[RMDB]
Source: RMDB library TTRDEL, as collected in RNAgym. The record gives the reactivity of an RNA of 177 nucleotides to DMS and 2A3. The RNA was probed in 150 mM KOAc, 10 mM MgCl2 and 150 mM bicine (pH 8.5) at 24 C. DMS adducts were read by reverse transcription with MarathonRT.
RNA sequence: GGGAACGACUCGAGUAGAGUCGAAAAGAUAUGGAUCAUGUGAAGACAACAGCUCGGAAACGAGACAUGUCUACACAUUGAUCCUAAGUCAAAUCAUUAUGCUAUCCUUCGGGAUAGCAUAAUGAAACCUAUGAGGUAUCUUCGGAUACCUCAUAGGAAAAGAAACAACAACAACAAC
Reactivity to DMS in 0.01 (KOAc 150mM, MgCl2 10mM, bicine 150mM(pH8.5), 24C), signal-to-noise 3, nucleotides 027 to 126: g010a050u010a300u000g000g000a010u000c000a020u010g010u020g000a200a010g000a010c010a020a110c240a150g010c010u010c000g000g000a090a080a230c000g000a010g010a050c070a180u000g000u000c000u000a110c000a000c000a010u010u010g010a000u000c000c010u000a010a070g000u000c030a100a100a130u000c000a010u000u000a010u000g000c000u000a000u000c000c000u000u020c260g060g020g000a010u000a000g000c000a000u000a000a000u000g000a010a050a140
Reactivity to 2A3 in 0.01 (KOAc 150mM, MgCl2 10mM, bicine 150mM(pH8.5), 24C), signal-to-noise 3, nucleotides 027 to 126: g010a000u080a030u120g010g000a000u010c000a010u020g010u010g040a050a010g000a010c010a130a020c040a160g050c000u010c010g020g030a090a060a040c020g000a000g030a020c010a040u110g010u000c010u070a010c000a000c000a000u060u140g000a000u010c000c000u010a070a000g060u020c030a000a010a170u030c010a000u000u000a000u010g000c010u000a000u020c010c010u040u140c300g070g020g000a000u000a000g010c000a000u000a000a000u000g000a000a000a000